[RMDB]
RNA sequence: GGGAACGACUCGAGUAGAGUCGAAAAGAAUCACCGUACCUAUUUAGGUUUACGCUCCAAGAUCGAUGGAUAGCAGCCCUAUCAAUAUCUAGGAGAACUGUGCUAUGUUUAGAAGAUUAGGUAGUCUAUUACACAGCCAUGUUCGCAUGGCUGUGAAGUGAUUAGUGGUGUUCGCACCACUAAUCACAAAAGAAACAACAACAACAAC
Reactivity to DMS in 0.01 (KOAc 150mM, MgCl2 10mM, bicine 150mM(pH8.5), 24C), signal-to-noise 1, nucleotides 027 to 156: g000a120a030u010c050a270c100c030g000u010a050c000c000u010a200u000u000u020a070g020g020u020u010u000a060c070g010c030u040c020c030a090a110g020a030u000c160g020a120u000g060g000a060u000a040g010c030a140g050c130c170c010u000a070u010c040a030a170u010a080u000c040u000a200g010g010a070g000a050a070c080u000g020u000g030c000u000a060u000g010u010u010u000a090g010a100a120g010a100u000u000a070g020g020u010a180g010u000c010u000a120u010u010a240c010a030c010a010g000c010c010a000u000g000u000u020c250g010c060a050u000g010g050c010u000g000u000g000a020a050
Reactivity to 2A3 in 0.01 (KOAc 150mM, MgCl2 10mM, bicine 150mM(pH8.5), 24C), signal-to-noise 3, nucleotides 027 to 156: g090a060a080u130c030a000c090c030g040u020a010c000c010u050a100u150u160u230a030g010g020u050u080u150a040c030g010c000u020c000c000a020a000g010a050u040c160g050a020u050g030g000a020u040a020g040c080a020g040c040c000c010u000a000u010c020a000a020u030a010u300c010u030a050g000g010a030g000a020a030c090u120g020u020g010c010u080a080u170g090u070u140u040a120g020a160a040g010a070u090u030a060g070g000u010a040g050u030c050u030a110u070u090a050c000a000c010a000g000c000c000a000u020g000u010u060c080g000c140a010u000g000g000c000u010g000u000g000a000a020